[RMDB]
RNA sequence: GGGAACGACUCGAGUAGAGUCGAAAACUGCGGCAGCACCGAUAUGCUGGCGUAAUGGCAAUAUCACCUGUUGAGGCUGAUAGGGCUCCUCACUAAACGGUGCAGCCCGAUACCAGUCGGUUAAGUCCUCGCUACACGAGUUCGCUCGUGUAGCGAGAAAAGAAACAACAACAACAAC
Reactivity to DMS in 0.01 (KOAc 150mM, MgCl2 10mM, bicine 150mM(pH8.5), 24C), signal-to-noise 1, nucleotides 027 to 126: c100u020g000c150g070g020c030a070g010c000a050c030c030g060a130u010a030u020g030c100u010g010g080c210g050u000a040a040u010g010g030c010a000a040u010a060u010c010a010c040c040u000g000u010u030g010a020g020g030c300u000g000a010u030a020g020g000g000c000u030c140c110u010c050a010c060u020a110a150a100c090g000g000u000g000c120a040g020c000c010c020g000a060u020a080c080c040a100g010u000c100g050g010u000u010a120a070g030u000c040